This 170-nucleotide RNA was probed chemically with 2A3 and DMS. For DMS, 133,858 sequencing reads were counted. For DMS the reverse transcriptase was MarathonRT. Conditions: 150 mM KOAc, 10 mM MgCl2 and 150 mM bicine (pH 8.5), 24 C.
RNA sequence: GGGAACGACUCGAGUAGAGUCGAAAAGUCGGGGGAAGCCAGAACGACUGGGAAAGGAAAGAAAGCAACGGGGCUAGCUGCCGGGUGUUCCAUCCAUGGGAUCGGUGCCGAGUGAGGCUUAUCCCGGGUAUCACUGGAUUCGUCCAGUGAAAAAGAAACAACAACAACAAC
Reactivity to 2A3 in 0.01 (KOAc 150mM, MgCl2 10mM, bicine 150mM(pH8.5), 24C), signal-to-noise 9, nucleotides 027 to 129: g060u030c020g000g000g000g010g020a030a010g030c020c010a040g030a100a050c070g060a050c040u040g020g000g030a050a050a020g040g020a040a020a020g040a030a080a010g040c030a040a070c050g010g010g040g010c010u040a040g010c020u040g050c010c000g020g000g010u050g020u050u010c020c010a040u010c030c020a110u160g040g000g010a030u050c060g050g060u080g060c000c010g020a040g050u160g050a050g020g010c000u010u050a030u030c010c000c010g010g010g000u060a050
Reactivity to DMS in 0.01 (KOAc 150mM, MgCl2 10mM, bicine 150mM(pH8.5), 24C), signal-to-noise 9, nucleotides 027 to 129: g030u000c030g000g000g040g000g000a060a060g010c040c050a080g010a170a090c090g000a060c050u000g010g010g010a040a050a070g000g000a020a030a020g030a040a050a060g000c100a070a060c100g010g000g020g020c060u000a070g000c050u020g010c010c000g000g010g020u000g020u020u020c030c040a070u010c050c080a090u050g010g000g010a030u000c090g030g030u030g020c000c020g010a100g020u040g010a110g000g030c040u000u040a040u000c010c000c000g000g000g030u040a100